The record gives the reactivity of an RNA of 207 nucleotides to 2A3.
Conditions: 150 mM KOAc, 10 mM MgCl2 and 150 mM bicine (pH 8.5), 24 C.
It was measured as part of the RMDB library M2RFPK.
Reactivities are given for positions 27 through 156.

RNA sequence: GGGAACGACUCGAGUAGAGUCGAAAAUCCGACGAGCUGAACGCUUUCGAAGGAAAGCUUGACCAGCAAAUCUUCUGCAACGCCAUUACGAGGACUGCCCUUAGAGGCUCAUGGCGAUAGGUCACCCAAAACUAUUUGAGGUUCGCCUCAAAUAGAAGCUCCGAACGAAGUUCGCUUCGUUCGGAGCAAAAGAAACAACAACAACAAC
Reactivity to 2A3 in 0.01 (KOAc 150mM, MgCl2 10mM, bicine 150mM(pH8.5), 24C), signal-to-noise 1, nucleotides 027 to 156: u060c040c020g010a050c040g000a020g000c020u120g070a080a090c080g000c000u050u220u020c060g060a080a030g030g020a000a080a000g020c000u070u030g020a020c010c010a020g030c050a000a060a190u130c120u170u030c060u070g120c040a000a070c020g000c000c000a030u080u030a050c130g050a060g040g060a150c100u090g020c000c000c010u130u220a160g040a140g140g020c020u020c010a010u000g000g010c000g030a070u090a070g000g020u010c050a110c020c020c000a020a060a040a060c000u010a010u020u000u000g000a000g000g020u010u090c120g130c050c000u000c000a000a000a000u000a000g000a030a000